[RMDB]
RNA sequence: GGGAACGACUCGAGUAGAGUCGAAAAAAAGAAAUGGAGGCUGUAAGAGGUUAUGUGACCUCCGUCACACCAUAGCUUGGCGACACACACAGGAUUGUUCUGUUCCUGCUGCCUCAGAUAGAGUCAAGAUCUGGGUCAAUUUCGAUUGACCCAGAUCAAAAGAAACAACAACAACAAC
Reactivity to 2A3 in 0.01 (KOAc 150mM, MgCl2 10mM, bicine 150mM(pH8.5), 24C), signal-to-noise 1, nucleotides 027 to 126: a030a000a020g140a050a050a000u070g020g000a030g010g030c100u010g000u100a110a000g050a010g090g000u120u060a160u300g200u190g040a000c010c000u010c030c000g020u000c010a050c010a010c050c030a050u050a010g020c000u020u050g070g020c010g040a010c010a000c000a010c000a000c050a090g000g030a170u000u140g080u180u020c080u080g010u020u000c040c000u030g000c100u030g000c010c000u030c000a000g010a000u140a050g090a020g030u030c020a020a060
Reactivity to DMS in 0.01 (KOAc 150mM, MgCl2 10mM, bicine 150mM(pH8.5), 24C), signal-to-noise 1, nucleotides 027 to 126: a070a050a010g010a080a110a030u000g000g010a120g020g040c120u010g010u000a140a050g000a000g020g000u010u000a130u030g000u000g000a020c010c010u000c040c050g000u000c080a020c070a010c020c020a020u000a070g000c060u010u000g000g010c000g000a110c040a070c140a130c130a090c000a070g000g000a070u000u000g010u000u000c090u010g010u000u000c010c010u010g000c130u000g000c090c020u020c040a140g000a100u000a080g010a090g010u000c030a060a170